[RMDB]
Source information: Structure probing data (2A3 and DMS) for a 177-nucleotide construct.

RNA sequence: GGGAACGACUCGAGUAGAGUCGAAAACGUCGUGAACUAGCGACAAUGCAUUAGGUCCAUCGUUAUCUAACCGAAACAUCGUGACUAGUCCUAGAAUAGAACCAGGAGAGGGCGCUGGCAAACAAAGACGAAGUGUAUUAUUCGUAGUACGCUUCGUAAAAGAAACAACAACAACAAC
Reactivity to 2A3 in 0.01 (KOAc 150mM, MgCl2 10mM, bicine 150mM(pH8.5), 24C), signal-to-noise 9, nucleotides 027 to 126: c040g010u010c010g010u030g070a100a060c040u020a050g010c000g030a010c000a010a060u100g010c020a040u030u110a040g020g020u010c020c010a050u040c060g020u020u050a090u050c040u040a020a060c030c010g030a040a030a020c040a060u110c070g060u070g060a060c030u030a030g040u000c000c000u040a040g050a080a040u130a050g040a040a020c010c010a010g000g020a050g010a020g010g010g000c010g000c010u000g010g000c010a030a040a010c020a020a100a010g090
Reactivity to DMS in 0.01 (KOAc 150mM, MgCl2 10mM, bicine 150mM(pH8.5), 24C), signal-to-noise 9, nucleotides 027 to 126: c140g010u010c040g020u010g000a110a090c090u020a070g000c050g000a050c060a090a070u030g010c080a070u010u010a080g010g000u000c030c040a090u010c080g010u010u010a060u020c070u020a090a080c080c040g010a110a070a080c090a050u010c070g010u010g010a080c030u010a050g010u010c010c010u000a060g020a070a060u020a070g010a090a110c040c030a050g000g000a080g000a060g010g000g010c040g000c020u000g000g010c080a060a060a060c130a050a080a080g010

For DMS the reverse transcriptase was MarathonRT. For 2A3 the reverse transcriptase was SuperScript II with manganese.